[RMDB]
RNA sequence: GGGAACGACUCGAGUAGAGUCGAAAACAAUUCUAAUGCAGCCUCCUCAUAGUACAGUUACUUGGAUAAGUGAAAAUGUACCCUUUGUUGCAGAUCACGGAGUUCAGCCUCUAAAAAACAGCCUAACAGGUGUGCAGAGAGUAACUAUAACGGACGAAAUCGCAGGAAUAUUCGUAUUCCUGCGAUUAAAAGAAACAACAACAACAAC
Reactivity to DMS in 0.01 (KOAc 150mM, MgCl2 10mM, bicine 150mM(pH8.5), 24C), signal-to-noise 2, nucleotides 027 to 156: c050a150a090u000u000c000u000a060a060u010g020c030a100g010c030c020u000c040c000u000c050a130u010a050g000u000a030c030a090g000u000u000a030c000u000u000g050g000a140u000a050a120g010u000g000a070a010a100a140u000g020u000a080c010c040c050u030u000u000g010u010u000g000c000a060g030a090u000c080a100c050g020g000a130g000u000u000c010a120g030c030c010u000c050u040a000a040a070a070a050a080c030a110g010c030c000u010a040a100c090a070g040g030u010g020u000g010c090a040g000a100g010a070g010u000a040a030c020u000a060u000a110a130c040g010g000a130c060g000a120
Reactivity to 2A3 in 0.01 (KOAc 150mM, MgCl2 10mM, bicine 150mM(pH8.5), 24C), signal-to-noise 2, nucleotides 027 to 156: c010a000a130u150u020c030u140a160a040u060g000c010a030g020c020c000u000c000c060u060c030a030u030a080g060u030a050c000a000g010u030u020a040c010u070u010g100g000a010u010a210a030g050u010g120a110a000a000a000u060g020u070a030c000c000c040u030u250u150g080u040u050g000c000a030g000a080u050c010a010c070g020g000a020g000u150u140c000a010g040c020c000u100c030u120a000a000a000a000a230a000c030a010g040c030c020u050a040a070c030a040g000g030u030g000u020g080c020a000g010a010g000a010g100u020a030a000c010u000a030u070a260a060c120g030g050a020c030g040a020

Overview: Chemical mapping of a 207-nucleotide RNA with DMS and 2A3. Conditions: 150 mM KOAc, 10 mM MgCl2 and 150 mM bicine (pH 8.5), 24 C. The data come from the RNA Mapping Database (RMDB), library OK3TST.